[RMDB]
RNA sequence: GGGAACGACUCGAGUAGAGUCGAAAAUGUGUAUGGCCACUGCCUGGUGAGUAGUGCCAGCAGACACUUGAACACUAAAAUAGGAGAAGGGACAAUGUGUGAGAUUCCCUGUGUUCAUGAGCUCAGCACAAGCCUCCAGAAUGACUGUCAUGACUGAGAUAUUUAAUGGAUUCGUCCAUUAAAUAUCAAAAGAAACAACAACAACAAC
Reactivity to DMS in 0.01 (KOAc 150mM, MgCl2 10mM, bicine 150mM(pH8.5), 24C), signal-to-noise 4, nucleotides 027 to 156: u010g030u000g010u010a070u010g030g010c020c050a110c030u000g020c110c010u000g040g030u000g010a190g010u000a120g030u010g020c000c030a110g000c060a100g010a130c080a080c030u010u010g010a060a060c020a040c020u000a040a080a080a160u010a150g010g020a140g020a060a050g010g010g000a080c070a080a090u000g020u020g020u010g000a160g020a210u000u000c020c000c010u010g020u000g020u000u000c010a050u000g010a100g000c020u000c060a090g030c020a050c030a070a130g000c050c020u000c020c020a080g010a090a100u000g000a050c030u010g010u000c030a060u000g010a190c050u000g000a300
Reactivity to 2A3 in 0.01 (KOAc 150mM, MgCl2 10mM, bicine 150mM(pH8.5), 24C), signal-to-noise 9, nucleotides 027 to 156: u110g020u000g010u030a090u110g020g000c040c020a010c030u020g030c030c010u020g030g020u060g040a180g040u120a030g020u060g030c010c010a010g000c010a010g040a040c040a020c110u030u050g010a020a000c000a010c030u140a090a090a120a130u240a120g120g060a120g060a130a050g060g010g010a020c090a120a140u140g080u070g060u120g160a070g020a130u070u060c000c000c000u010g010u000g000u010u000c010a010u030g020a010g020c020u030c110a010g010c010a010c010a040a050g040c000c000u040c020c000a030g040a160a090u090g050a120c090u060g020u090c040a030u100g040a060c030u030g020a020